[RMDB]
RNA sequence: GGGAACGACUCGAGUAGAGUCGAAAACGCUGGGUCGCACUAAGGCUAUGAACUACUCGAUACUGAAGCGCGCACGGUAUACGAGCAUAGCUAUGUGCGACCUGUGCUGAAGCGCGCACGGCAACCGAAAGGUGCGAACCGGGAGUUUCGACUCCCGAGUAAGUGUCUAGUUCGCUAGACACUUACUAAAAGAAACAACAACAACAAC
Reactivity to 2A3 in 0.01 (KOAc 150mM, MgCl2 10mM, bicine 150mM(pH8.5), 24C), signal-to-noise 6, nucleotides 027 to 156: c040g010c010u030g000g010g000u000c010g040c020a010c020u140a300a300g020g000c010u010a000u000g000a010a010c020u140a060c000u300c010g020a010u010a000c000u020g040a240a060g010c000g000c000g000c000a010c010g000g030u010a010u070a160c040g000a000g010c000a000u000a000g000c000u020a050u060g000u000g000c000g000a000c000c000u000g000u010g000c010u100g040a120a040g000c010g000c000g000c000a000c020g070g000c020a080a120c010c000g060a120a030a020g030g000u020g010c020g010a050a050c050c000g010g050g000a010g000u050u160u240c150g080a070c010u000c000c000c000g000
Reactivity to DMS in 0.01 (KOAc 150mM, MgCl2 10mM, bicine 150mM(pH8.5), 24C), signal-to-noise 2, nucleotides 027 to 156: c080g040c000u010g010g020g010u000c040g000c000a010c020u000a080a140g000g030c000u010a020u000g010a110a090c040u000a300c000u000c000g000a130u000a020c020u000g020a060a090g030c020g050c010g010c030a300c000g000g000u000a040u000a100c020g020a050g010c010a050u000a030g000c010u000a150u000g010u010g010c000g000a000c010c000u010g010u020g010c010u000g000a120a090g020c050g030c010g040c000a240c050g000g010c050a120a080c010c010g000a090a080a230g010g010u000g000c030g010a070a100c070c070g000g020g000a020g020u010u020u020c230g020a070c010u000c010c000c000g000